The record gives the reactivity of an RNA of 177 nucleotides to 2A3 and DMS. For 2A3 the reverse transcriptase was SuperScript II with manganese. Values cover nucleotides 27 to 126. The 2A3 profile rests on 4,775 reads.
[RMDB]
RNA sequence: GGGAACGACUCGAGUAGAGUCGAAAACAAAGCCAGAUUCUCGUACUGGCAAGAAACGGAUAAAACUUGAGGCAAACGAGAAAUCCACAGGAAAAAGCAGAAAAACUGCAAUCCGAAAACAAACAAAAGUACUAAAUCACUUCGGUGAUUUAGUACUAAAAGAAACAACAACAACAAC
Reactivity to 2A3 in 0.01 (KOAc 150mM, MgCl2 10mM, bicine 150mM(pH8.5), 24C), signal-to-noise 4, nucleotides 027 to 126: c050a020a100a000g000c010c000a020g000a060u110u040c050u010c050g040u070a070c000u010g010g020c020a000a010g020a010a070a020c090g070g010a030u110a140a140a030a060c030u050u060g020a050g060g030c080a110a030a030c010g010a000g010a090a040a030u040c020c010a020c030a080g000g080a060a090a040a030a080g010c010a000g110a060a120a010a010a070c000u010g000c000a000a020u000c000c010g070a100a050a010a010c090a030a080a000c030a040a100a020
Reactivity to DMS in 0.01 (KOAc 150mM, MgCl2 10mM, bicine 150mM(pH8.5), 24C), signal-to-noise 3, nucleotides 027 to 126: c010a100a220a070g000c010c030a010g000a100u040u000c000u020c020g000u010a160c000u000g000g030c000a100a040g010a140a060a070c110g010g000a040u010a070a070a120a060c060u010u010g030a190g020g000c160a060a010a050c040g010a000g010a010a030a090u000c020c000a080c080a020g000g000a030a090a070a130a290g000c000a010g000a170a120a070a110a130c050u000g000c010a190a070u020c000c020g020a050a090a060a050c170a070a030a110c210a080a030a060
DMS adducts were read by reverse transcription with MarathonRT. The RNA was probed in 150 mM KOAc, 10 mM MgCl2 and 150 mM bicine (pH 8.5) at 24 C.